[RMDB]
RNA sequence: GGGAACGACUCGAGUAGAGUCGAAAAAUUUUGAGGAAGUGAUCCCAUCUGAGGGGUACAGCAAGUAUGUGGUAAGGAAAAACCCAAAUGGGCAGAGGGAGUUGGCAAUUAGCUCUCUUAUUGUACCACACCAAUUAGAAUUCGUUCUAAUUGGUGUAAAAGAAACAACAACAACAAC
Reactivity to DMS in 0.01 (KOAc 150mM, MgCl2 10mM, bicine 150mM(pH8.5), 24C), signal-to-noise 9, nucleotides 027 to 126: a100u010u000u010u000g010a110g010g000a080a080g010u010g000a130u000c010c010c010a110u010c090u000g010a130g010g010g000g020u000a040c060a050g000c050a040a060g020u000a060u000g020u000g010g010u010a040a080g010g010a050a060a060a100a080c020c010c010a040a080a090u020g010g000g010c030a080g000a030g000g000g000a020g010u000u000g010g010c200a070a100u010u010a040g000c020u000c010u000c010u000u000a060u000u000g010u000a070c030c030
Reactivity to 2A3 in 0.01 (KOAc 150mM, MgCl2 10mM, bicine 150mM(pH8.5), 24C), signal-to-noise 7, nucleotides 027 to 126: a000u160u200u080u110g060a050g030g030a070a040g020u030g080a060u040c010c010c010a030u020c050u050g070a060g020g030g020g010u040a040c020a020g020c020a060a070g050u060a080u140g080u080g030g020u060a040a090g050g070a070a040a020a030a040c020c000c010a030a090a080u090g010g010g000c030a020g010a020g040g000g010a020g020u030u050g080g030c040a070a110u090u040a090g000c000u010c000u000c000u030u020a140u060u050g030u040a180c000c010

This 177-nucleotide RNA was probed chemically with DMS and 2A3. For DMS, 25,889 sequencing reads were counted. For 2A3 the reverse transcriptase was SuperScript II with manganese. Conditions: 150 mM KOAc, 10 mM MgCl2 and 150 mM bicine (pH 8.5), 24 C. Reactivities are given for positions 27 through 126. DMS (dimethyl sulfate) methylates the pairing face of unpaired adenines and cytosines.